Structure probing data (2A3 and DMS) for a 177-nucleotide construct. The DMS profile rests on 1,809 reads. Source: RMDB library OK1LIB, as collected in RNAgym. 2A3 adducts were read by reverse transcription with SuperScript II with manganese. Conditions: 150 mM KOAc, 10 mM MgCl2 and 150 mM bicine (pH 8.5), 24 C. For 2A3, 2,666 sequencing reads were counted. 2A3 is a SHAPE reagent: it acylates the 2'-hydroxyl of flexible nucleotides of all four kinds.
RNA sequence: GGGAACGACUCGAGUAGAGUCGAAAAUUCAUGGAGACCCAUCCCACACUGGAUGCCUUACACUGUGACAUCGGCAAUGCCACUGAGUUUUACAAAAUAUUCCAAGAUGAGAUUGGGGAGGUGUCCCGGGUAAUCAUACCUUCGGGUAUGAUUACCCAAAAGAAACAACAACAACAAC
Reactivity to 2A3 in 0.01 (KOAc 150mM, MgCl2 10mM, bicine 150mM(pH8.5), 24C), signal-to-noise 4, nucleotides 027 to 126: u050u040c040a090u150g020g030a070g010a030c000c030c000a050u080c000c020c010a040c010a040c070u030g010g010a010u030g020c000c000u000u120a070c070a040c090u090g030u080g070a010c000a040u070c020g020g040c050a070a130u080g010c000c000a040c040u040g030a000g100u060u030u010u070a120c140a010a130a010a030u150a110u070u050c020c030a030a040g040a170u160g020a020g030a100u080u110g010g000g030g000a030g010g010u030g040u030c000c000c000
Reactivity to DMS in 0.01 (KOAc 150mM, MgCl2 10mM, bicine 150mM(pH8.5), 24C), signal-to-noise 2, nucleotides 027 to 126: u000u090c080a100u030g040g000a030g010a060c000c030c020a050u020c040c010c020a080c200a020c150u020g060g000a010u000g000c060c110u000u000a060c090a130c120u000g000u000g000a110c050a070u010c020g010g010c050a060a110u000g020c040c020a090c090u040g000a070g040u000u000u070u000a070c110a050a050a030a080u030a050u000u050c020c040a070a100g000a110u020g010a090g000a060u010u030g000g000g030g030a030g000g000u000g010u030c000c000c040